An RNA of 177 nucleotides, treated with DMS and 2A3 and read out base by base. For 2A3 the reverse transcriptase was SuperScript II with manganese. For DMS, 2,041 sequencing reads were counted. It was measured as part of the RMDB library RFM100. The RNA was probed in 150 mM KOAc, 10 mM MgCl2 and 150 mM bicine (pH 8.5) at 24 C. For DMS the reverse transcriptase was MarathonRT.
[RMDB]
RNA sequence: GGGAACGACUCGAGUAGAGUCGAAAACAUCAGAAGGGCCAAAAGGAGCGCCCGGCGGAUCCGGCCGGGCGGGAAAAGAAAGCGCGUCGAUGAAAAGCCGGCUGGCCCAGGAAAGCGCAUGGCGUGAAUAUUAUACCGAAUUCGUUCGGUAUAAUAUAAAAGAAACAACAACAACAAC
Reactivity to DMS in 0.01 (KOAc 150mM, MgCl2 10mM, bicine 150mM(pH8.5), 24C), signal-to-noise 2, nucleotides 027 to 126: c020a060u060c080a140g020a120a090g030g040g010c010c040a060a070a300a190g000g000a300g000c020g000c000c000c000g000g010c000g020g010a140u010c190c270g000g000c000c010g000g020g010c000g010g020g000a070a040a070a050g000a120a100a100g000c090g000c040g010u000c030g030a050u000g000a090a060a120a120g010c050c010g000g000c250u000g010g000c030c000c020a050g000g020a080a100a160g020c020g010c050a050u000g000g030c040g000u000g000a110
Reactivity to 2A3 in 0.01 (KOAc 150mM, MgCl2 10mM, bicine 150mM(pH8.5), 24C), signal-to-noise 1, nucleotides 027 to 126: c020a020u140c020a000g120a300a120g100g000g000c040c040a000a150a000a020g090g020a090g020c020g020c000c010c000g000g000c040g020g100a200u160c120c120g060g000c000c020g000g000g000c000g000g000g010a030a060a000a000g050a040a130a000g040c040g000c040g080u050c030g050a030u070g000a020a210a010a030g050c000c000g010g000c000u040g000g000c000c000c010a000g000g000a050a030a020g050c050g000c070a050u050g030g000c020g010u030g030a030